Chemical mapping of a 170-nucleotide RNA with DMS and 2A3. Conditions: 150 mM KOAc, 10 mM MgCl2 and 150 mM bicine (pH 8.5), 24 C. The data come from the RNA Mapping Database (RMDB), library 15KLIB.
RNA sequence: GGGAACGACUCGAGUAGAGUCGAAAAGGACCUUAAUGGCAAGUGGUAUGAUUUUGGUGACUUCGUAAUCACUCAACCUGGUUCAGGAGUAGCUAUAGUUGAUAGCUACUAUUCUUAUUUGAUGCCUCACGCGCGCUCUUCGGAGCGCGCAAAAGAAACAACAACAACAAC
Reactivity to DMS in 0.01 (KOAc 150mM, MgCl2 10mM, bicine 150mM(pH8.5), 24C), signal-to-noise 2, nucleotides 027 to 129: g000g000a110c030c050u020u050a060a050u080g000g000c120a120a120g020u000g020g020u030a030u030g050a030u000u000u000u100g220g030u000g060a110c120u000u000c130g020u000a030a220u010c030a000c150u050c050a060a270c050c010u010g000g020u010u020c090a040g010g000a050g020u010a000g020c010u040a030u000a140g090u000u140g030a240u010a010g030c020u000a000c000u000a120u000u050c000u010u010a000u040u010u010g010a170u070g000c000c060u000c030a100c100
Reactivity to 2A3 in 0.01 (KOAc 150mM, MgCl2 10mM, bicine 150mM(pH8.5), 24C), signal-to-noise 2, nucleotides 027 to 129: g030g000a050c040c000u060u080a140a030u140g000g000c000a100a010g000u000g110g010u120a050u050g120a040u080u190u160u050g170g000u080g000a050c000u000u000c120g000u110a070a020u020c050a000c060u110c020a050a100c000c040u070g000g000u120u000c090a000g010g000a000g030u000a000g000c000u000a000u010a010g050u010u100g140a000u000a000g000c000u000a000c000u000a000u070u030c000u000u050a180u050u030u160g070a010u150g050c000c000u030c000a180c050